An RNA of 207 nucleotides, treated with DMS and 2A3 and read out base by base. The 2A3 profile rests on 1,207 reads.
[RMDB]
RNA sequence: GGGAACGACUCGAGUAGAGUCGAAAAGAGGAAAGAGGAAGAAGCGCUCAGAUGCUCCGCGGCUGUCGUGAAGGUUAAAACCGAAAAUAAAAAUGGGCUAGACACAAAGGACUCGGUGCUUGUCCCAGCCAGGCGCCCUCGGCGACGCGGGCAGCUGGCUGGCUCUAUUUUUCGAAAUAGAGCCAGCAAAAGAAACAACAACAACAAC
Reactivity to DMS in 0.01 (KOAc 150mM, MgCl2 10mM, bicine 150mM(pH8.5), 24C), signal-to-noise 1, nucleotides 027 to 156: g000a100g000g020a030a060a060g030a050g000g000a090a040g030a100a070g050c070g000c070u040c040a070g010a080u010g030c020u000c060c030g000c000g000g030c030u010g020u000c070g010u000g000a090a070g030g000u010u000a100a080a100a100c070c010g010a080a050a070a110u030a040a050a030a080a040u030g040g020g010c010u000a120g030a080c050a100c040a070a090a150g010g010a070c060u000c060g000g030u010g010c050u000u010g030u010c020c050c050a140g000c080c040a060g000g040c070g000c000c000c010u000c030g000g000c000g010a010c020g030c040g000g000g020c000a050g010c030u010g030
Reactivity to 2A3 in 0.01 (KOAc 150mM, MgCl2 10mM, bicine 150mM(pH8.5), 24C), signal-to-noise 2, nucleotides 027 to 156: g030a020g010g000a070a010a050g010a000g010g030a000a050g010a020a000g010c030g050c030u030c060a020g010a050u030g040c020u030c130c010g000c010g010g040c100u060g000u020c010g010u070g080a150a030g010g030u060u150a020a070a040a040c040c010g080a020a080a090a060u160a020a100a030a000a000u040g010g010g030c020u040a030g140a060c020a000c030a080a220a070g090g030a110c080u070c220g050g000u020g000c020u040u040g040u080c000c000c000a010g010c010c040a040g040g000c050g000c010c000c010u010c000g010g000c000g000a010c010g000c000g000g000g000c000a010g010c000u000g030
Conditions: 150 mM KOAc, 10 mM MgCl2 and 150 mM bicine (pH 8.5), 24 C. Source: RMDB library OK3TST, as collected in RNAgym.